[RMDB]
RNA sequence: GGGAACGACUCGAGUAGAGUCGAAAAUUAUUGAGCGUAGAUGUCUCUGUCACGAAACGAGUAAGUGACUCUCGUGUACUACUGGCGAAUGAGACAGAGACAUUAUAUGCUCGUGCCAGUCAAUAAAUCAGUGUGCAUUGUUCGCAAUGCACACUGAAAAAGAAACAACAACAACAAC
Reactivity to DMS in 0.01 (KOAc 150mM, MgCl2 10mM, bicine 150mM(pH8.5), 24C), signal-to-noise 1, nucleotides 027 to 126: u020u020a110u010u000g000a020g030c000g050u000a030g000a020u000g000u000c000u000c000u000g000u000c000a150c020g000a170a130a030c020g000a050g000u000a030a040g000u020g030a050c030u010c270u000c160g000u010g030u000a050c000u020a090c020u000g010g030c010g010a100a070u000g010a060g000a020c000a010g000a020g000a010c000a000u000u000a040u000a010u000g030c020u000c020g010u000g010c070c030a120g020u020c170a070a050u000a050a040a120
Reactivity to 2A3 in 0.01 (KOAc 150mM, MgCl2 10mM, bicine 150mM(pH8.5), 24C), signal-to-noise 1, nucleotides 027 to 126: u100u080a060u120u220g010a000g000c040g000u000a000g010a010u000g000u000c000u010c010u000g000u020c020a000c100g070a000a060a000c030g000a040g020u040a110a120g030u120g170a000c000u020c030u020c080g200u150g040u040a050c040u000a000c010u020g250g080c040g070a110a060u090g000a060g000a020c030a020g000a010g030a010c000a000u000u000a010u000a000u070g000c010u020c000g000u010g000c040c010a060g080u120c080a100a170u070a250a080a030

Annotation: An RNA of 177 nucleotides, treated with DMS and 2A3 and read out base by base. The RNA was probed in 150 mM KOAc, 10 mM MgCl2 and 150 mM bicine (pH 8.5) at 24 C. For DMS, 1,116 sequencing reads were counted. It was measured as part of the RMDB library M2PK90.